[RMDB]
RNA sequence: GGGAACGACUCGAGUAGAGUCGAAAAACUGCCUCAGCGCGGCGGGAAAGGAGAGGAGUUCAACAAUUUUUAUGAAUUUCUAAUCCAACCUCAUCAUCCUAUGGGAAACAGAAGACCACCAAGAACAGCCAGCUGAUGGAAUCUCAUUCUGUCACCAUAUGGUCCAUUUAUUCGUAAAUGGACCAUAAAAAGAAACAACAACAACAAC
Reactivity to DMS in 0.01 (KOAc 150mM, MgCl2 10mM, bicine 150mM(pH8.5), 24C), signal-to-noise 1, nucleotides 027 to 156: a050c020u020g010c000c040u000c000a140g070c010g120c170g000g000c090g010g000g000a060a040a220g000g030a040g000a300g000g000a080g010u000u000c020a040a130c100a050a100u000u000u000u000u000a130u100g010a040a030u000u000u000c040u010a020a300u000c000c070a020a230c020c030u000c070a030u000c050a160u000c030c010u000a080u000g040g000g000a100a020a220c070a050g000a070a110g000a180c040c000a080c000c010a130a030g000a000a130c000a300g090c050c030a080g000c040u000g000a050u010g010g000a100a040u000c140u020c010a130u000u000c000u000g010u000c040a100c020c080a100
Reactivity to 2A3 in 0.01 (KOAc 150mM, MgCl2 10mM, bicine 150mM(pH8.5), 24C), signal-to-noise 3, nucleotides 027 to 156: a010c020u050g020c040c000u090c080a140g040c060g030c090g070g030c040g000g010g000a120a100a070g030g000a010g000a010g000g010a020g010u020u020c020a050a080c060a120a110u070u160u060u300u300a080u140g010a000a010u200u220u080c020u030a020a030u000c000c000a030a100c000c010u020c020a140u050c010a050u030c010c010u050a070u080g030g010g000a080a050a020c000a020g040a060a020g020a080c020c020a010c020c020a140a010g040a070a040c010a020g070c060c030a030g060c060u030g000a050u070g010g000a010a030u050c090u010c060a070u130u000c000u010g030u020c030a000c080c010a020
This 207-nucleotide RNA was probed chemically with DMS and 2A3.